[RMDB]
An RNA of 177 nucleotides, treated with 2A3 and DMS and read out base by base. Reactivities are given for positions 27 through 126. Values are in units of 0.01, from 0 to 300, in steps of 10. 2A3 adducts were read by reverse transcription with SuperScript II with manganese.
RNA sequence: GGGAACGACUCGAGUAGAGUCGAAAAGAAACAUGGUUCGCCAUGUUUCAAAGAAGCUCAUAAUGACGCAAACAACGGCGUCGCCGUCAGCAAACGGCGAAAAAAGACUUAUCUUCGGAUAAGUCAACUUUGAAAAAUUGUUCGCAAUUUUUCAAAGAAAAGAAACAACAACAACAAC
Reactivity to 2A3 in 0.01 (KOAc 150mM, MgCl2 10mM, bicine 150mM(pH8.5), 24C), signal-to-noise 3, nucleotides 027 to 126: g010a000a010a010c000a010u000g010g030u030u050c090g040c070c000a000u000g000u000u000u000c000a000a000a000g060a050a020g010c030u020c110a110u120a300a140u230g020a000c020g000c020a060a140a190c060a110a090c100g060g000c000g000u020c010g000c000c000g030u060c030a080g010c070a210a110a030c000g010g000c050g000a040a000a000a000a000a000g000a000c000u000u000a010u040c010u020u070c230g030g010a000u000a000a010g000u010c010a000a010
Reactivity to DMS in 0.01 (KOAc 150mM, MgCl2 10mM, bicine 150mM(pH8.5), 24C), signal-to-noise 3, nucleotides 027 to 126: g010a010a000a000c000a020u010g000g010u000u010c210g030c000c000a000u000g010u000u000u000c000a070a120a110g000a100a110g010c020u020c090a130u000a090a080u010g000a040c030g000c010a070a050a100c160a080a090c170g000g000c020g010u000c000g010c000c000g020u000c090a100g010c160a090a160a030c010g000g010c010g000a000a040a050a060a080a110g000a030c000u000u010a000u000c000u000u030c200g040g000a020u000a000a000g010u000c010a030a060